The record gives the reactivity of an RNA of 177 nucleotides to DMS and 2A3.
Source: RMDB library OK1LIB, as collected in RNAgym.
Values cover nucleotides 27 to 126.
RNA sequence: GGGAACGACUCGAGUAGAGUCGAAAAGAUGGACGCAGCGUGGAGUUGUAGCGCCGCUGAUUCUGGAGGAUUAGCCGGAGUUCCCCCGUGUAGCCGGGAUCGAUGAUGCCAACAUGAGACGUGACCGGACUAAUCAUUAGUUCGCUAAUGAUUAGUCAAAAGAAACAACAACAACAAC
Reactivity to DMS in 0.01 (KOAc 150mM, MgCl2 10mM, bicine 150mM(pH8.5), 24C), signal-to-noise 9, nucleotides 027 to 126: g010a060u020g010g020a090c090g020c020a060g010c040g010u010g010g010a110g020u010u010g010u010a120g000c020g010c020c040g010c030u010g000a080u010u010c030u000g010g010a150g010g000a100u020u010a100g020c030c020g000g000a140g010u000u000c010c010c010c030c050g010u020g010u020a080g010c040c020g010g000g000a070u000c050g000a080u010g000a140u010g010c020c030a070a100c140a080u020g000a050g010a060c030g010u000g000a160c020c040g010
Reactivity to 2A3 in 0.01 (KOAc 150mM, MgCl2 10mM, bicine 150mM(pH8.5), 24C), signal-to-noise 9, nucleotides 027 to 126: g100a040u130g020g020a020c030g000c060a030g020c040g050u060g020g060a130g040u050u050g050u170a040g020c010g010c020c020g000c020u030g020a100u070u030c030u080g090g050a110g050g020a060u060u070a040g040c030c020g010g000a030g010u030u040c010c010c000c000c010g040u050g050u130a020g030c020c010g020g010g010a030u030c020g020a040u080g010a020u080g050c020c010a060a030c040a150u170g020a010g010a030c020g010u020g020a020c010c000g010
The DMS profile rests on 45,106 reads.
Conditions: 150 mM KOAc, 10 mM MgCl2 and 150 mM bicine (pH 8.5), 24 C.
DMS adducts were read by reverse transcription with MarathonRT.